[RMDB]
RNA sequence: GGGAACGACUCGAGUAGAGUCGAAAAAAGCUCAGGGAAGCUCUGGAGGCCAUCAAGGUAUACGGACUCCCAGUCUCUACCUUCAAUCUAUGGCGCUCACGUUAGUGCAGGGAACCGCCCAAGACGUCAAGAAACAAAGAUUUCACUAUAUCAGUGCACCUAAUUAUGCAUUCGUGCAUAAUUAGGUAAAAGAAACAACAACAACAAC
Reactivity to DMS in 0.01 (KOAc 150mM, MgCl2 10mM, bicine 150mM(pH8.5), 24C), signal-to-noise 3, nucleotides 027 to 156: a060a060g030c010u000c050a160g020g020g000a090a070g020c020u000c030u010g010g000a030g010g030c020c020a100u010c040a040a050g020g020u000a080u000a090c100g020g000a080c030u000c070c030c040a240g030u000c030u000c020u000a050c000c010u000u000c050a110a110u000c100u000a060u000g030g010c010g010c020u010c040a120c120g010u010u000a100g030u030g010c050a070g020g030g030a040a080c080c020g010c060c010c050a100a130g020a050c050g000u000c040a040a070g000a090a050a080c060a090a050a060g010a300u000u000u010c030a060c020u000a080u010a080u000c070a040g000u000g010c140
Reactivity to 2A3 in 0.01 (KOAc 150mM, MgCl2 10mM, bicine 150mM(pH8.5), 24C), signal-to-noise 6, nucleotides 027 to 156: a010a000g080c050u060c060a020g040g010g020a050a010g010c030u020c060u060g080g010a040g000g060c020c010a040u110c100a090a040g050g000u040a080u030a090c090g030g020a010c020u050c010c010c010a010g020u000c010u000c000u030a020c000c000u060u060c050a070a110u030c030u120a100u080g020g000c050g030c150u030c010a070c030g030u120u140a040g020u070g070c030a020g040g000g020a030a030c030c020g080c000c010c000a010a030g050a050c040g020u080c040a070a040g050a120a110a030c070a050a100a030g020a060u040u130u090c010a020c030u120a100u040a080u300c100a040g040u080g030c020